[RMDB]
RNA sequence: GGGAACGACUCGAGUAGAGUCGAAAACUCAGGUGAUCCUCCUGCCUUAGUCUUCACAGGCAGCUGGGACUGUAGGUGUGCUUGCCACCACGCCCAGCUAAUUUUUGUAUUUUCAGUACAGACGGGGUUUCACACUGGUCUUGAACACCUGACCCCAGAGAGUAUCCUUAUUCGUAAGGAUACUCUCAAAAGAAACAACAACAACAAC
Reactivity to 2A3 in 0.01 (KOAc 150mM, MgCl2 10mM, bicine 150mM(pH8.5), 24C), signal-to-noise 6, nucleotides 027 to 156: c050u040c020a010g030g010u020g030a110u040c010c020u040c010c010u020g000c010c030u100u070a090g040u070c080u200u220c120a090c040a090g050g000c010a000g010c000u010g010g010g050a090c100u240g040u130a160g000g000u020g020u060g040c100u080u160g060c010c000a020c010c000a010c010g010c000c010c000a000g000c010u030a050a070u020u100u050u040u070g040u020a050u030u120u040u120c060a030g020u040a020c010a020g040a030c030g030g000g000g000u020u110u110c050a070c020a060c060u040g000g050u040c050u060u150g040a080a020c030a010c040c010u030g040a050c000c010c000c020a010
Reactivity to DMS in 0.01 (KOAc 150mM, MgCl2 10mM, bicine 150mM(pH8.5), 24C), signal-to-noise 2, nucleotides 027 to 156: c050u010c030a060g000g020u000g030a050u010c040c010u000c020c020u000g050c010c000u010u000a100g020u000c040u000u010c130a140c130a080g030g040c100a040g000c020u000g000g000g020a030c020u000g040u010a090g060g000u040g020u000g000c170u000u000g010c010c030a040c020c010a060c050g030c000c020c000a080g020c030u000a000a020u000u000u000u010u000g010u000a060u000u000u010u000c140a140g000u010a060c060a060g010a090c120g010g010g000g000u000u000u000c030a050c050a100c040u010g000g010u000c030u000u010g000a120a120c060a070c030c010u010g000a240c020c000c020c030a270

Structure probing data (2A3 and DMS) for a 207-nucleotide construct. 2A3 adducts were read by reverse transcription with SuperScript II with manganese. The 2A3 profile rests on 5,335 reads. The RNA was probed in 150 mM KOAc, 10 mM MgCl2 and 150 mM bicine (pH 8.5) at 24 C.